[RMDB]
RNA sequence: GGGAACGACUCGAGUAGAGUCGAAAACGCAUUGCUUUCUUUAUUUUCAGGCGACUUUUUUUAGAGUCCGCCAAACAGCAAGAUUGGUAGUGGUCAUUUUCGGAAUAUAAAGCUGGCAUCGCUACGGGGACUAUACGUGAUUCGUCACGUAUAGUCCAAAAGAAACAACAACAACAAC
Reactivity to 2A3 in 0.01 (KOAc 150mM, MgCl2 10mM, bicine 150mM(pH8.5), 24C), signal-to-noise 5, nucleotides 027 to 126: c080g030c020a040u000u070g020c020u020u070u050c020u000u140u070a110u070u140u040u030c080a030g000g000c020g010a010c000u010u080u120u040u000u050u270a020g000a000g000u040c140c050g000c000c000a030a060a020c070a020g100c010a030a070g020a120u060u080g070g050u040a060g050u070g090g010u050c020a130u020u030u060u090c080g070g050a070a010u040a020u050a180a070a010g020c010u010g010g000c000a040u070c050g000c030u050a050c040g070g010
Reactivity to DMS in 0.01 (KOAc 150mM, MgCl2 10mM, bicine 150mM(pH8.5), 24C), signal-to-noise 2, nucleotides 027 to 126: c080g000c060a140u020u000g000c020u000u000u020c010u000u000u000a030u010u010u000u010c080a140g000g000c020g000a030c000u030u000u000u040u030u020u020a120g000a010g010u010c080c110g000c000c000a010a020a090c210a090g010c140a010a050g000a030u010u000g020g030u010a000g040u020g010g030u020c090a050u000u000u000u030c060g010g000a000a050u020a060u020a010a040a050g000c110u000g000g010c020a030u020c050g000c010u020a080c140g010g010
Record summary:
This 177-nucleotide RNA was probed chemically with 2A3 and DMS. Reactivities are given for positions 27 through 126. For DMS, 3,322 sequencing reads were counted. For 2A3, 3,394 sequencing reads were counted.